[RMDB]
RNA sequence: GGGAACGACUCGAGUAGAGUCGAAAAGUCUUCACCCCAAGAUCCCUGUGUAUGGCCUCGCCGUCGAUGAUCCAGGGGAGGUUGGUGAGGUGACACACGUUCUCCUCCACCGGUCCUGCGCCGGAUGAAAGUUUCGGGAAUUCGUUCCCGAAACUUUAAAAGAAACAACAACAACAAC
Reactivity to DMS in 0.01 (KOAc 150mM, MgCl2 10mM, bicine 150mM(pH8.5), 24C), signal-to-noise 1, nucleotides 027 to 126: g020u000c010u000u010c050a220c010c000c010c020a150a120g000a060u010c030c010c020u030g040u000g000u000a090u040g000g000c000c030u000c200g000c030c100g030u000c090g020a080u010g010a090u000c050c030a130g010g000g000g020a050g010g000u000u000g010g010u010g000a030g000g030u000g000a110c130a060c110a210c060g010u000u000c000u000c010c000u000c050c030a110c010c000g000g000u000c030c080u000g020c170g030c020c010g030g020a100u010g000